Chemical mapping of a 177-nucleotide RNA with 2A3 and DMS. The reactions ran in a buffer of 150 mM KOAc, 10 mM MgCl2 and 150 mM bicine (pH 8.5), at 24 C. 2A3 adducts were read by reverse transcription with SuperScript II with manganese. Reactivities are given for positions 27 through 126. DMS adducts were read by reverse transcription with MarathonRT. For 2A3, 1,020 sequencing reads were counted. For DMS, 1,546 sequencing reads were counted.
[RMDB]
RNA sequence: GGGAACGACUCGAGUAGAGUCGAAAACGGUCUAGCAUUCGACGGAGAUGCGGAUCGCUGCUUUGUUGUCGAUGAGCUUGGCCAGCCGGUCAGCCCUUCGGCCAUUUGUGCCAUCGUCGCUGAACGCGUUACAGUGAGCCUUCGGGCUCACUGUAACAAAAGAAACAACAACAACAAC
Reactivity to 2A3 in 0.01 (KOAc 150mM, MgCl2 10mM, bicine 150mM(pH8.5), 24C), signal-to-noise 1, nucleotides 027 to 126: c020g050g000u050c020u050a040g000c000a040u110u040c090g060a100c190g150g020a260g000a100u090g000c040g020g050a090u200c240g030c100u060g040c010u140u090u200g090u140u090g000u040c010g020a020u020g090a020g040c010u040u100g010g000c000c000a010g000c060c060g000g070u100c030a050g030c000c000c070u030u100c030g050g000c000c060a060u070u150u210g100u120g040c020c000a060u030c010g000u020c070g000c040u050g080a060a030c060g000c050
Reactivity to DMS in 0.01 (KOAc 150mM, MgCl2 10mM, bicine 150mM(pH8.5), 24C), signal-to-noise 2, nucleotides 027 to 126: c100g000g010u000c000u000a050g060c020a210u000u000c030g030a120c140g040g020a040g000a070u010g000c030g040g000a090u010c210g020c030u000g030c080u000u000u020g010u010u000g030u000c040g030a030u000g000a210g030c020u010u010g030g000c010c100a170g000c150c050g010g000u000c010a040g000c010c010c020u000u000c120g020g020c020c030a100u000u010u040g030u000g030c000c010a040u000c030g000u010c110g030c030u000g020a030a040c060g010c210